This 177-nucleotide RNA was probed chemically with DMS. Reactivities are given for positions 27 through 126.
RNA sequence: GGGAACGACUCGAGUAGAGUCGAAAAAGCGCCGAUUAUUUCGGAAGUUAAACGUCUUGCAACUGAAGGUAAGCCAGUAUUAGGUGUUUGUAAUGGGUUUCAAAUUUUAACUGAAAUAGGCUUAUUAGGUGCCAUACUAUUUCGAUAGUAUGGCACCAAAAGAAACAACAACAACAAC
Reactivity to DMS in 0.01 (KOAc 150mM, MgCl2 10mM, bicine 150mM(pH8.5), 24C), signal-to-noise 1, nucleotides 027 to 126: a090g010c160g010c010c010g070a050u010u000a300u010u010u010c030g020g000a120a100g020u020u010a030a080a110c060g020u000c030u010u010g030c110a070a060c050u010g000a150a150g010g030u010a030a020g010c030c000a060g010u000a030u000u000a160g010g000u000g000u010u000u000g000u000a020a070u000g010g010g020u110u030u000c010a000a040a110u030u000u000u000a070a130c010u020g000a070a090a070u010a090g000g000c000u000u000a030u000u000a080